[RMDB]
RNA sequence: GGGAACGACUCGAGUAGAGUCGAAAAUUCCCGAUUCCGUCCAACCCCCACCCCCGAGGGUCGCCCAGGAAUGGCGGGACCCACUCGACUGGGGUCCGCGUUCCAUCCUUUCUUACCUGAUGGCCGGGUAGAUUAUUUAGUUCGCUAAAUAAUCUACAAAAGAAACAACAACAACAAC
Reactivity to DMS in 0.01 (KOAc 150mM, MgCl2 10mM, bicine 150mM(pH8.5), 24C), signal-to-noise 4, nucleotides 027 to 126: u000u000c000c010c000g010a150u010u000c020c020g000u000c030c030a110a300c020c000c010c000c020a240c030c020c000c010c020g010a060g010g000g010u000c030g010c010c030c050a110g010g000a040a020u010g020g040c010g010g010g000a020c000c000c000a020c040u010c220g010a150c170u000g010g010g020g000u000c010c000g000c020g000u000u000c010c010a140u010c070c050u000u000u020c050u010u010a120c080c050u010g010a110u000g010g020c040c020g000g020
Reactivity to 2A3 in 0.01 (KOAc 150mM, MgCl2 10mM, bicine 150mM(pH8.5), 24C), signal-to-noise 1, nucleotides 027 to 126: u020u000c020c000c000g000a100u130u030c010c030g030u000c030c020a090a110c070c030c020c020c000a030c010c000c000c000c000g020a060g000g000g000u040c030g030c020c000c000a020g050g050a040a030u090g300g070c000g010g000g040a020c010c030c010a030c010u190c090g160a200c070u050g000g000g000g000u020c000c000g000c010g000u040u000c010c000a020u050c010c020u080u150u070c040u040u050a120c020c030u030g060a060u060g120g000c060c000g040g030
The record gives the reactivity of an RNA of 177 nucleotides to DMS and 2A3. Conditions: 150 mM KOAc, 10 mM MgCl2 and 150 mM bicine (pH 8.5), 24 C. The 2A3 profile rests on 1,911 reads. DMS adducts were read by reverse transcription with MarathonRT. For DMS, 4,067 sequencing reads were counted. It was measured as part of the RMDB library VIROID.